RNA sequence: GGGAACGACUCGAGUAGAGUCGAAAAGCUUGCUGCCAAAGGAACCGCAUCGCCGCCAAUCUCGCACUUGCACAAACUUAUAUUGCACUGCAGUAUGGGUCGGGGCGGGAAUGCGAGCCGGGUUCGGGAAGAAUAUCACGUUCGCGUGAUAUUCUUCAAAAGAAACAACAACAACAAC
Reactivity to 2A3 in 0.01 (KOAc 150mM, MgCl2 10mM, bicine 150mM(pH8.5), 24C), signal-to-noise 1, nucleotides 027 to 126: g040c060u090u100g010c030u070g000c000c050a100a100a050g110g000a060a070c040c030g020c100a050u060c010g020c020c000g000c040c030a050a080u000c010u000c030g000c000a080c100u040u150g010c050a020c040a060a100a040c080u070u030a030u000a000u070u040g000c100a130c290u180g000c000a000g020u020a010u040g050g030g030u050c070g040g000g050g000c010g000g000g000a020a000u050g000c050g000a000g020c010c020g060g010g000u040u090c030g040g020
Reactivity to DMS in 0.01 (KOAc 150mM, MgCl2 10mM, bicine 150mM(pH8.5), 24C), signal-to-noise 1, nucleotides 027 to 126: g000c030u000u010g020c030u010g000c010c070a080a090a140g010g000a050a070c030c010g000c040a060u020c040g010c010c040g100c130c150a060a080u000c000u010c000g030c070a040c050u000u000g040c150a100c090a120a050a000c090u000u000a050u000a050u000u000g000c030a180c150u030g000c000a030g020u010a010u020g000g000g000u010c100g000g000g000g000c070g000g000g000a100a020u000g010c020g020a110g000c050c060g000g010g010u000u000c030g030g000